Record summary:
This 177-nucleotide RNA was probed chemically with 2A3 and DMS. The data come from the RNA Mapping Database (RMDB), library M2PK50. Values cover nucleotides 27 to 126. The DMS profile rests on 3,316 reads.
[RMDB]
RNA sequence: GGGAACGACUCGAGUAGAGUCGAAAACCUUGGUCCUUCGGGACCAAGGAAACCCGAAGACAUACAGACUGUGGGCGGCGAGACAAUCCACAAGAGUCGGUAAAAGCGUCUGGUUCGCCAGACGCAAGACUACUACCAAGUUCGCUUGGUAGUAGUCAAAAGAAACAACAACAACAAC
Reactivity to 2A3 in 0.01 (KOAc 150mM, MgCl2 10mM, bicine 150mM(pH8.5), 24C), signal-to-noise 4, nucleotides 027 to 126: c000c000u000u000g020g010u010c010c000u030u040c210g090g010g010a000c000c000a000a000g000g000a060a020a000c000c010c010g030a060a030g130a030c060a040u200a030c020a040g080a030c040u020g000u030g020g010g020c070g020g050c070g040a050g020a060c030a030a050u030c020c010a020c020a040a040g120a020g090u030c020g000g020u090a070a100a040a060g000c010g010u000c000u000g000g050u030u070c220g040c030c000a000g000a000c000g000c000a000a000
Reactivity to DMS in 0.01 (KOAc 150mM, MgCl2 10mM, bicine 150mM(pH8.5), 24C), signal-to-noise 4, nucleotides 027 to 126: c000c000u000u000g010g010u000c000c000u000u010c200g020g020g020a030c000c000a010a000g010g010a020a070a090c010c010c010g010a080a070g000a150c110a140u010a070c060a070g010a040c060u000g010u000g000g010g020c300g020g000c060g020a090g000a150c050a130a090u000c020c020a050c050a080a110g010a050g010u000c000g010g010u000a030a050a070a140g020c000g000u000c000u000g020g000u000u000c200g010c010c010a000g000a010c000g010c000a000a020